[RMDB]
The data come from the RNA Mapping Database (RMDB), library OK3TST.
Structure probing data (DMS and 2A3) for a 207-nucleotide construct.
For DMS the reverse transcriptase was MarathonRT.
Conditions: 150 mM KOAc, 10 mM MgCl2 and 150 mM bicine (pH 8.5), 24 C.
The 2A3 profile rests on 709 reads.
RNA sequence: GGGAACGACUCGAGUAGAGUCGAAAACUUUGCUAGUCACAGGAUAGACCUCCCUGUUGAUAGGGUAGACCUCCCUGUUGAUAACUUGUCAGUCAUGGGACUGAAUGAGGCCUUUCUCCAGGAGGCACAGCCCAGAGGGUUACUGGCCAUGCUGAGACAUCGACCAUACUUUCGAGUAUGGUCGAUGAAAAGAAACAACAACAACAAC
Reactivity to DMS in 0.01 (KOAc 150mM, MgCl2 10mM, bicine 150mM(pH8.5), 24C), signal-to-noise 1, nucleotides 027 to 156: c060u000u010u020g050c030u010a080g010u000c040a020c050a080g030g050a070u010a140g020a020c030c020u010c000c070c000u010g000u010u000g020a120u000a130g010g050g020u000a140g020a060c040c020u000c050c020c000u000g020u060u000g000a020u000a060a050c070u000u010g010u000c000a030g000u000c010a290u020g000g000g000a040c010u010g070a010a030u000g000a030g010g010c050c090u000u000u000c070u000c130c090a150g000g010a110g020g000c000a070c040a160g060c010c010c010a240g050a180g020g010g010u010u000a010c080u010g020g100c000c020a180u000g000c020u020g000a280g020a180
Reactivity to 2A3 in 0.01 (KOAc 150mM, MgCl2 10mM, bicine 150mM(pH8.5), 24C), signal-to-noise 2, nucleotides 027 to 156: c060u050u140u110g040c060u050a020g010u050c000a000c000a010g050g020a100u040a150g070a180c000c010u030c020c020c040u060g040u220u140g050a180u170a120g020g000g040u080a050g120a210c000c020u020c000c000c000u010g000u060u030g000a020u010a060a060c000u000u040g020u020c000a000g010u010c000a140u110g060g300g000a000c030u010g010a120a100u050g020a020g110g000c020c010u010u050u050c030u000c020c040a030g020g000a000g000g060c020a000c000a110g000c000c010c010a050g030a060g010g000g000u020u050a020c060u000g000g090c000c000a020u050g070c040u040g000a000g010a070